[RMDB]
RNA sequence: GGGAACGACUCGAGUAGAGUCGAAAAGAUAUGGAUAUUGGAGCGAUAAGCUCUCACAUCGGAAACGAUGUACGCGAGAGCUUUUGACGCUCAGGUCCUAAGUCAAACACCAUGUUCGCAUGGUGAACAAAGCUUAUAUCUUCGGAUAUAAGCUUUGAAAAGAAACAACAACAACAAC
Reactivity to 2A3 in 0.01 (KOAc 150mM, MgCl2 10mM, bicine 150mM(pH8.5), 24C), signal-to-noise 7, nucleotides 027 to 126: g020a010u080a040u160g020g010a030u100a210u250u300g230g010a010g010c010g010a020u010a100a020g000c000u000c000u010c010a010c000a010u010c010g020g030a060a060a040c030g000a000u020g080u140a080c240g050c150g100a010g000a000g000c000u020u010u020u040g050a020c010g000c000u010c010a000g070g020u000c000c000u030a130a040g080u040c050a080a080a040c000a020c000c000a010u010g040u030u060c200g000c180a010u010g010g030u020g010a050a010
Reactivity to DMS in 0.01 (KOAc 150mM, MgCl2 10mM, bicine 150mM(pH8.5), 24C), signal-to-noise 9, nucleotides 027 to 126: g010a040u000a300u010g000g010a010u000a080u010u010g020g010a010g010c000g010a150u000a020a020g010c000u000c000u000c010a090c000a010u000c000g010g000a130a090a200c010g020a010u000g010u000a060c290g030c300g000a020g010a010g010c000u000u000u000u000g010a160c060g010c000u000c000a030g000g000u000c000c000u000a050a110g010u000c030a100a100a220c010a010c000c000a000u000g000u000u010c220g030c010a010u000g000g010u000g000a070a160